The data come from the RNA Mapping Database (RMDB), library OK2TST. Structure probing data (DMS and 2A3) for a 177-nucleotide construct. As a SHAPE reagent, 2A3 marks flexible, mostly unpaired nucleotides at the ribose 2'-OH. The DMS profile rests on 1,813 reads. Reactivities are rounded to 0.1 and cut off at 0 and 3.

RNA sequence: GGGAACGACUCGAGUAGAGUCGAAAAAAAGUUAAUAAGGAUGUAGGAAGCAAAAAAGUUAUUAUUAGGGACAUCUCAGAGUUAGAAUCCAUGAGAGAUAAAACUAAUCUCCAUAACUAUGAUACGGUCUUGUAAUUCGAUUCGUCGAAUUACAAGAAAAAGAAACAACAACAACAAC
Reactivity to DMS in 0.01 (KOAc 150mM, MgCl2 10mM, bicine 150mM(pH8.5), 24C), signal-to-noise 2, nucleotides 027 to 126: a050a050a030g000u010u000a060a090u000a100a130g000g000a060u000g010u000a030g030g010a050a060g010c070a000a040a080a070a040a070g000u020u000a070u010u000a050u010u000a030g010g000g020a260c070a010u000c010u000c020a070g000a060g010u000u000a040g010a120a090u010c060c060a100u000g020a100g000a020g010a020u000a040a030a120a100c120u020a030a020u000c100u010c070c070a040u000a030a030c060u000a060u000g010a100u020a110c130g010g040
Reactivity to 2A3 in 0.01 (KOAc 150mM, MgCl2 10mM, bicine 150mM(pH8.5), 24C), signal-to-noise 1, nucleotides 027 to 126: a000a000a000g030u030u010a090a020u110a080a100g040g000a020u060g000u030a040g000g040a040a010g030c000a050a100a050a020a000a000g130u140u070a070u060u000a010u000u020a040g060g030g030a010c000a000u000c000u000c060a030g000a000g100u010u000a040g050a110a050u080c000c000a080u130g010a030g000a000g010a090u020a110a220a010a000c020u020a020a000u010c020u080c040c030a020u020a050a020c050u120a030u230g020a020u040a170c070g070g030